An RNA of 177 nucleotides, treated with DMS and 2A3 and read out base by base.
RNA sequence: GGGAACGACUCGAGUAGAGUCGAAAAACUGAGAUAUGCAGUAGAGAUGCUAUUAGUCUCCGAAUUGAUAUGACUAUGAACGUACGAAUAUCACGGCAUGAACAGCAGAAGCUUUAUUAGCGAACCAUGUAGUUACACUAUUCGUAGUGUAACUACAAAAAGAAACAACAACAACAAC
Reactivity to DMS in 0.01 (KOAc 150mM, MgCl2 10mM, bicine 150mM(pH8.5), 24C), signal-to-noise 8, nucleotides 027 to 126: a080c030u000g010a060g010a110u010a060u000g020c010a070g010u000a080g010a060g000a050u000g010c090u010a100u010u010a100g000u000c020u000c040c050g000a140a090u000u010g000a020u000a020u000g010a290c300u000a000u000g010a080a090c190g000u000a020c060g000a110a040u000a020u000c000a060c100g000g010c150a020u000g000a120a100c040a030g000c040a050g000a080a100g000c020u000u000u000a070u010u000a040g020c010g000a060a100c030c050a100
Reactivity to 2A3 in 0.01 (KOAc 150mM, MgCl2 10mM, bicine 150mM(pH8.5), 24C), signal-to-noise 3, nucleotides 027 to 126: a000c020u020g020a020g000a030u080a000u050g000c010a000g010u100a020g010a000g000a020u020g000c010u010a040u160u090a050g000u000c000u000c010c000g040a050a080u070u030g010a000u020a000u030g020a000c010u000a000u030g060a090a010c080g010u020a000c010g020a020a000u010a000u010c010a000c000g000g000c000a020u030g010a030a010c010a000g010c010a010g010a060a000g020c010u040u070u020a080u050u100a030g000c000g000a020a010c000c000a010

The data come from the RNA Mapping Database (RMDB), library OK2TRN. Values cover nucleotides 27 to 126. The reactions ran in a buffer of 150 mM KOAc, 10 mM MgCl2 and 150 mM bicine (pH 8.5), at 24 C.